[RMDB]
RNA sequence: GGGAACGACUCGAGUAGAGUCGAAAAAGGUAUUCGUACCUGGAAAAACCUUUGUGUAUAGGGAUAAGUAUGGGAGCUCGCGGAUCCCAUUGGGAUCCGGAAGAGCGAAGAACAUACGUAACCUAUACACUCUGGUCAGCUGAAGCUUCGGCUUCAAUUAGACAUAACUCUUCGGAGUUAUGUCUAAAAAAGAAACAACAACAACAAC
Reactivity to 2A3 in 0.01 (KOAc 150mM, MgCl2 10mM, bicine 150mM(pH8.5), 24C), signal-to-noise 1, nucleotides 027 to 156: a000g030g000u030a020u060u120c160g020u050a020c010c000u020g030g030a090a110a030a020a030c010c000u010u000u000g000u000g000u000a000u000a010g050g000g000a010u000a000a030g040u030a000u020g060g000g010a020g000c020u000c000g070c000g070g010a000u000c000c000c000a040u000u130g000g000g000a000u000c000c030g000g020a160a030g000a000g000c010g010a000a010g010a000a000c000a000u010a000c010g000u000a000a010c000c000u010a000u000a000c000a000c000u000c010u000g000g000u030c030a050g050c050u060g000a010a000g000c000u020u130c290g120g000c000u010u000c050a000a000
Reactivity to DMS in 0.01 (KOAc 150mM, MgCl2 10mM, bicine 150mM(pH8.5), 24C), signal-to-noise 2, nucleotides 027 to 156: a040g020g010u000a000u000u010c180g020u000a030c010c000u010g000g000a100a060a100a070a010c010c010u000u000u010g010u000g000u000a010u000a020g020g000g010a130u000a120a300g000u000a000u000g000g020g020a300g010c000u000c020g020c000g010g000a030u000c000c000c010a290u010u020g070g030g020a020u030c000c000g010g000a010a060g020a040g060c000g010a090a160g010a110a130c010a000u000a010c000g000u000a100a260c010c000u010a030u000a010c000a000c010u000c030u010g010g020u000c010a090g000c080u000g000a020a050g000c030u000u000c260g050g020c010u010u010c020a030a140